The record gives the reactivity of an RNA of 207 nucleotides to 2A3 and DMS. For 2A3, 7,739 sequencing reads were counted.
RNA sequence: GGGAACGACUCGAGUAGAGUCGAAAAGUGGAGAAGAGGAUACUGGAGGACAGGUUAUCAGAGGUUACCAAGUCCCUGCCAUGCAGCCUGUACCCACCUCCCGCUUGACCUGCCAUCUUCUUUUUCCACAUGACAUCCUGGUGAGCUAGGUGCUGCACCGUAUAAUUACCUUCGGGUAAUUAUACGGAAAAGAAACAACAACAACAAC
Reactivity to 2A3 in 0.01 (KOAc 150mM, MgCl2 10mM, bicine 150mM(pH8.5), 24C), signal-to-noise 7, nucleotides 027 to 156: g010u000g010g000a020g010a020a000g020a010g020g010a020u070a150c110u210g070g020a060g010g030a060c020a020g020g010u060u080a060u140c030a030g030a050g100g020u060u090a070c040c040a070a000g060u060c020c010c000u020g030c030c020a080u180g010c010a010g000c000c030u040g040u120a100c030c030c010a020c010c000u010c000c010c010g020c070u030u080g030a050c000c020u020g060c020c010a020u010c000u020u010c000u040u030u020u210u010c000c000a000c000a000u040g030a020c010a050u060c000c010u030g020g030u060g030a030g020c030u060a050g010g060u060g060c020u050g000c010a010
Reactivity to DMS in 0.01 (KOAc 150mM, MgCl2 10mM, bicine 150mM(pH8.5), 24C), signal-to-noise 3, nucleotides 027 to 156: g030u000g010g020a120g000a050a020g010a050g000g000a070u010a120c160u000g000g000a140g060g020a110c020a040g000g020u000u000a090u010c070a040g000a050g040g020u000u020a100c050c030a090a190g010u000c050c010c010u050g030c030c080a110u010g030c090a050g050c010c000u000g050u000a080c030c030c040a300c020c020u000c010c020c050g000c090u000u000g010a060c040c020u010g000c010c050a090u000c020u000u000c000u020u000u010u010u020c010c040a010c030a130u000g000a100c070a100u000c040c010u000g030g020u000g020a100g040c010u000a130g020g020u000g000c030u000g010c040a160